[RMDB]
RNA sequence: GGGAACGACUCGAGUAGAGUCGAAAAGAGGUUUCUCACCCCCUCGAGGGGGUAAGGCCCCCGGCAGACCACCGGGUUGAUAGGCCAGAACUGGAAGCACAGUAAUGUGUGGAGGUGACUGGUACUAUAAACCAUUCUACUUCGGUAGAAUGGUUUAAAAAGAAACAACAACAACAAC
Reactivity to 2A3 in 0.01 (KOAc 150mM, MgCl2 10mM, bicine 150mM(pH8.5), 24C), signal-to-noise 3, nucleotides 027 to 126: g100a030g000g030u020u090u060c040u030c040a030c000c020c000c010c020u110c160g090a300g000g000g000g010g010u010a000a000g030g000c000c000c000c000c020g020g000c050a080g060a110c010c000a000c000c000g000g010g020u020u030g030a010u020a000g010g010c010c000a000g000a000a000c000u020g060g160a010a010g000c020a000c010a010g060u260a110a250u050g000u000g010u040g000g040a010g010g000u040g060a180c000u000g010g010u040a180c000u020a010
Reactivity to DMS in 0.01 (KOAc 150mM, MgCl2 10mM, bicine 150mM(pH8.5), 24C), signal-to-noise 8, nucleotides 027 to 126: g020a080g000g010u010u030u040c020u010c080a040c010c000c010c000c010u020c300g010a190g010g010g000g000g000u000a010a020g010g000c030c010c010c000c000g000g000c040a090g000a090c050c040a300c010c010g000g010g000u010u010g010a070u010a020g000g000c000c000a000g000a300a020c000u000g000g020a300a140g000c000a000c000a010g010u050a150a090u000g010u010g000u000g000g000a220g000g010u000g010a090c010u000g000g000u010a060c010u000a060
An RNA of 177 nucleotides, treated with 2A3 and DMS and read out base by base. For 2A3 the reverse transcriptase was SuperScript II with manganese. For DMS the reverse transcriptase was MarathonRT.